[RMDB]
Conditions: 150 mM KOAc, 10 mM MgCl2 and 150 mM bicine (pH 8.5), 24 C. Structure probing data (2A3 and DMS) for a 177-nucleotide construct. 2A3 adducts were read by reverse transcription with SuperScript II with manganese.

RNA sequence: GGGAACGACUCGAGUAGAGUCGAAAAUGAAUAGAUAAAUUGGCAAUAUCUUGUUCGAAGACGUGCUUCAACCAAUCUUUCCAUUCAUCGAUUUCAUAGUAGCCAAGGCGUGUUUUAACACUUACCGGAGCUAUAGGGGAUUCGUCCCCUAUAGCUCAAAAGAAACAACAACAACAAC
Reactivity to 2A3 in 0.01 (KOAc 150mM, MgCl2 10mM, bicine 150mM(pH8.5), 24C), signal-to-noise 6, nucleotides 027 to 126: u050g010a010a010u020a040g030a010u070a030a120a030u170u110g060g000c050a040a040u020a050u080c120u080u070g050u060u070c110g040a010a010g040a060c110g070u130g100c080u030u000c010a040a050c010c010a020a060u020c050u010u030u020c010c020a010u020u020c010a010u020c010g080a090u020u060u020c030a030u040a060g140u040a030g080c010c020a050a000g030g000c060g030u030g050u030u130u080u110a120a030c030a000c010u040u130a030c020c040g060
Reactivity to DMS in 0.01 (KOAc 150mM, MgCl2 10mM, bicine 150mM(pH8.5), 24C), signal-to-noise 2, nucleotides 027 to 126: u010g000a000a010u000a120g000a020u010a010a060a050u000u050g000g030c080a070a080u010a060u010c060u020u010g000u000u020c110g030a000a000g000a130c250g020u020g020c080u000u020c050a050a080c120c180a050a090u030c100u000u000u020c000c010a040u000u010c050a000u000c030g000a040u040u000u000c000a040u000a050g000u000a110g000c000c020a090a030g010g000c170g000u000g010u000u010u030u000a070a050c060a020c010u000u040a130c060c030g000